[RMDB]
RNA sequence: GGGAACGACUCGAGUAGAGUCGAAAAGGAACGGCGAAUGCUUCGUGUUCGAUGAGCGCGUGGCCGUUGGGCAUGGGCUUGCCGAAAGCGACGUGGAGCUUUGCCGCGCCUGCCGCCGUCCGCUCAACGUUUUACUGGGGUUCGCCCCAGUAAAACGAAAAGAAACAACAACAACAAC
Reactivity to DMS in 0.01 (KOAc 150mM, MgCl2 10mM, bicine 150mM(pH8.5), 24C), signal-to-noise 1, nucleotides 027 to 126: g010g000a040a070c050g000g000c000g000a050a030u010g020c000u000u000c030g030u010g010u000u000c000g040a070u000g000a030g010c030g040c030g040u000g000g010c000c050g010u010u020g020g010g010c010a040u000g010g010g020c030u000u000g010c070c040g010a050a040a110g030c110g020a110c100g020u000g010g000a070g020c040u000u000u010g010c040c010g010c300g000c000c000u010g000c070c040g010c020c050g010u010c030c060g050c030u000c060a060a170
Reactivity to 2A3 in 0.01 (KOAc 150mM, MgCl2 10mM, bicine 150mM(pH8.5), 24C), signal-to-noise 1, nucleotides 027 to 126: g050g010a060a000c000g010g000c000g030a040a020u220g020c020u070u040c020g000u020g040u000u070c050g030a060u100g030a030g020c150g000c000g050u020g090g120c000c000g020u040u090g040g010g030c010a020u000g040g190g020c000u010u000g010c010c060g000a070a050a010g090c060g040a060c000g000u040g030g010a020g020c000u060u010u030g000c000c020g000c020g010c010c020u080g010c030c010g050c060c010g050u070c020c020g020c000u070c030a050a040